The record gives the reactivity of an RNA of 207 nucleotides to 2A3. Source: RMDB library M2RFOK, as collected in RNAgym. Conditions: 150 mM KOAc, 10 mM MgCl2 and 150 mM bicine (pH 8.5), 24 C.
RNA sequence: GGGAACGACUCGAGUAGAGUCGAAAAACAUGCUGGCCAACCCAACCCCACGAUCCUCCAUCGGCAUGAUCAUGAUGUGUUCUCAAAUAUCAGGCCAGUAAAUCAUCAUGCUCGUGCUGGUAAAGGCAACUUAUGCCCAAGUUCGCUUGGGCAUAAACGGGUCCUUUAUAUUCGUAUAAAGGACCCGAAAAGAAACAACAACAACAAC
Reactivity to 2A3 in 0.01 (KOAc 150mM, MgCl2 10mM, bicine 150mM(pH8.5), 24C), signal-to-noise 2, nucleotides 027 to 156: a000c050a020u050g000c000u000g000g020c000c000a030a000c020c040c060a030a060c030c000c040c050a050c050g070a120u050c000c020u040c060c010a030u030c020g000g010c010a000u010g000a000u010c020a000u010g000a000u000g040u000g030u090u020c060u010c020a110a100a030u250a080u110c100a070g010g010c010c000a000g010u020a010a040a060u050c000a000u000c010a000u000g000c000u000c010g000u000g000c010u000g000g000u030a130a150a030g040g020c030a030a020c040u010u000a000u000g000c020c000c000a010a000g010u010u050c090g030c110u000u020g050g000g000c000a000u000a000a000a000